Chemical mapping of a 177-nucleotide RNA with 2A3 and DMS.
Values cover nucleotides 27 to 126.
As a SHAPE reagent, 2A3 marks flexible, mostly unpaired nucleotides at the ribose 2'-OH.
The reactions ran in a buffer of 150 mM KOAc, 10 mM MgCl2 and 150 mM bicine (pH 8.5), at 24 C.
For DMS the reverse transcriptase was MarathonRT.
RNA sequence: GGGAACGACUCGAGUAGAGUCGAAAAGGACAAACCACACAGUCUCUCAUACAGCAGUACUUCUGGAGAGAGUAGCCCAGUUCUGAAACUGUCCUCCAGACGCCUAAUCACUGCCUUUAUUGGGUUAGUUCGUAGACGUUUUCGAACGUCUACGAACAAAAGAAACAACAACAACAAC
Reactivity to 2A3 in 0.01 (KOAc 150mM, MgCl2 10mM, bicine 150mM(pH8.5), 24C), signal-to-noise 1, nucleotides 027 to 126: g000g000a020c000a000a110a020c050c020a040c000a010c030a140g060u030c010u000c000u010c040a030u070a250c010a030g050c010a010g070u060a090c040u070u110c000u010g000g010a050g000a000g010a010g070u030a020g000c040c010c000a010g020u050u000c040u080g110a190a020a020c040u030g060u070c010c030u000c040c000a020g000a040c020g020c000c020u070a090a070u090c040a010c080u020g000c010c010u130u300u060a080u170u050g010g000g000u070u080a080
Reactivity to DMS in 0.01 (KOAc 150mM, MgCl2 10mM, bicine 150mM(pH8.5), 24C), signal-to-noise 1, nucleotides 027 to 126: g000g000a040c000a030a080a210c000c020a070c090a080c050a060g010u000c050u010c000u000c030a090u020a200c200a050g000c060a060g020u000a220c070u010u000c040u000g000g000a060g010a050g000a060g030u000a060g000c090c080c010a090g050u020u000c100u000g000a110a080a190c070u010g000u000c060c040u000c030c030a030g010a080c180g000c150c170u010a040a040u010c070a080c040u000g020c030c000u000u000u010a070u010u000g010g010g010u000u000a050